[RMDB]
RNA sequence: GGGAACGACUCGAGUAGAGUCGAAAAUCAUCAACACUACCCAAUAAAUCCGAUGUCUUGAUUACCUGGCUCAUUGAUUAUGUUGAGGAUACAUGGGGAUCUGAUGGUAAUCCAAUUACAAAAACUACAUCCGAUUAUCAAGAUUCUGAUGUAUCACCUCCAAUAGUCCGUUCGCGGACUAUUGGAGAAAAGAAACAACAACAACAAC
Reactivity to 2A3 in 0.01 (KOAc 150mM, MgCl2 10mM, bicine 150mM(pH8.5), 24C), signal-to-noise 2, nucleotides 027 to 156: u060c040a020u090c030a030a100c010a010c040u090a040c000c000c020a000a060u080a060a060a000u010c040c090g110a070u050g050u080c030u020u130g020a130u060u160a090c010c030u030g040g000c020u030c070a100u110u060g040a050u060u210a070u130g020u020u070g010a180g050g010a000u010a000c000a010u010g000g010g000g000a010u010c010u120g070a110u040g020g000u010a000a000u000c030c080a070a030u170u120a080c070a040a120a040a090a020c140u170a060c010a080u070c050c030g000a000u010u010a000u030c020a040a000g010a010u040u020c010u090g110a000u000g000u000a000u010c000a020c010
Source: RMDB library OK3TST, as collected in RNAgym. This 207-nucleotide RNA was probed chemically with 2A3. The reactions ran in a buffer of 150 mM KOAc, 10 mM MgCl2 and 150 mM bicine (pH 8.5), at 24 C. High 2A3 reactivity points to a flexible backbone, as in loops and unpaired stretches.